Chemical mapping of a 177-nucleotide RNA with DMS and 2A3. For 2A3, 7,078 sequencing reads were counted. For DMS the reverse transcriptase was MarathonRT. Conditions: 150 mM KOAc, 10 mM MgCl2 and 150 mM bicine (pH 8.5), 24 C. The DMS profile rests on 11,532 reads.
RNA sequence: GGGAACGACUCGAGUAGAGUCGAAAAAAGAACAUUGAGGUUGCGGCUCGCGUCGGUGGUGGUGAUCCAGUGGGCAACCCAACGCUCUACGAUGCGAUCCAGAAAGCGAAGAAGAGCUCGGUGCCCAUACCCAAAAUAUAUUCGUAUAUUUUGGGUAAAAAGAAACAACAACAACAAC
Reactivity to DMS in 0.01 (KOAc 150mM, MgCl2 10mM, bicine 150mM(pH8.5), 24C), signal-to-noise 9, nucleotides 027 to 126: a070a080g000a090a090c080a080u010u000g000a100g010g010u000u000g010c050g010g010c040u000c060g010c070g020u000c050g010g020u010g010g010u000g000g010u000g000a080u010c050c050a120g020u000g000g010g010c020a050a070c050c010c050a080a090c270g000c000u000c010u000a100c040g010a210u010g010c010g000a100u010c090c150a120g010a070a090a150g010c030g000a080a200g000a110a040g010a040g010c030u000c300g010g010u010g000c010c000c010a100
Reactivity to 2A3 in 0.01 (KOAc 150mM, MgCl2 10mM, bicine 150mM(pH8.5), 24C), signal-to-noise 3, nucleotides 027 to 126: a010a010g080a050a020c040a030u060u090g050a030g060g030u060u060g040c030g040g000c010u020c020g030c020g030u030c040g020g020u030g020g030u030g000g040u040g020a040u050c020c010a010g030u060g000g010g010c030a080a200c010c000c010a030a050c060g000c000u000c010u020a030c010g010a010u140g000c000g010a020u050c020c010a030g190a090a050a010g020c020g030a040a010g020a020a020g000a030g000c030u030c050g020g000u020g010c000c000c000a000